An RNA of 177 nucleotides, treated with DMS and 2A3 and read out base by base. It was measured as part of the RMDB library OK1LIB. DMS adducts were read by reverse transcription with MarathonRT. High DMS reactivity at an A or C suggests that its Watson-Crick edge is free. 2A3 adducts were read by reverse transcription with SuperScript II with manganese. The reactions ran in a buffer of 150 mM KOAc, 10 mM MgCl2 and 150 mM bicine (pH 8.5), at 24 C.
RNA sequence: GGGAACGACUCGAGUAGAGUCGAAAACGUCAGAAGACGAAGUCGGUCCAUCUGCGGUAAGAGACCGACAUAGAGUUCGAAGCAGAACGCACAACCGCAGACACACGAUUGGAGUGUGAAUGAGAGAAUUAUCACCGAGUUUCGACUCGGUGAUAAUAAAAGAAACAACAACAACAAC
Reactivity to DMS in 0.01 (KOAc 150mM, MgCl2 10mM, bicine 150mM(pH8.5), 24C), signal-to-noise 2, nucleotides 027 to 126: c030g030u010c000a130g020a130a040g000a000c020g000a130a090g020u000c000g000g000u040c020c070a200u000c000u010g000c000g000g020u020a070a090g010a220g010a030c000c010g020a000c010a010u010a060g010a140g000u000u020c060g020a110a120g050c090a130g020a000a000c000g070c080a160c130a110a050c000c030g000c010a000g000a210c060a010c010a010c010g040a150u020u060g020g020a170g010u020g010u000g000a110a070u020g000a120g000a150g020a150
Reactivity to 2A3 in 0.01 (KOAc 150mM, MgCl2 10mM, bicine 150mM(pH8.5), 24C), signal-to-noise 4, nucleotides 027 to 126: c010g010u020c020a130g110a300a020g030a200c030g020a160a020g000u000c010g000g000u010c030c000a060u030c030u010g000c020g010g000u010a050a030g030a010g000a040c000c000g000a000c000a000u040a020g100a010g010u000u010c010g010a090a000g100c100a080g030a050a020c000g010c060a070c040a140a040c000c000g000c020a000g020a000c000a000c000a000c000g160a110u150u280g170g060a180g020u000g000u000g010a020a110u240g030a060g010a000g040a060